The data come from the RNA Mapping Database (RMDB), library M2PK90. Structure probing data (DMS) for a 177-nucleotide construct. For DMS the reverse transcriptase was MarathonRT.

RNA sequence: GGGAACGACUCGAGUAGAGUCGAAAAAAAAAGGAACUAUGUUCAGGCAUGAAGCCUCCACGUGCGUGCGAAAGCACCCGGAAACGGCUGAGCAUAGUUCCGAGCUGAAGGAGGCACGCCUCAAAAACUGAUGUGUAUUCUUCGGAAUACACAUCAGAAAAGAAACAACAACAACAAC
Reactivity to DMS in 0.01 (KOAc 150mM, MgCl2 10mM, bicine 150mM(pH8.5), 24C), signal-to-noise 1, nucleotides 027 to 126: a050a090a050a130a080g000g000a010a000c010u020a000u010g010u000u000c000a000g000g030c000a020u000g000a100a020g010c000c000u000c020c020a300c020g010u000g010c000g060u000g000c000g000a130a080a110g000c000a000c000c000c000g000g010a100a070a150c000g010g020c000u000g000a020g000c010a000u020a030g000u000u000c030c000g020a000g000c000u000g010a030a060g040g020a020g020g020c000a190c190g000c190c010u010c040a100a030a050a170a230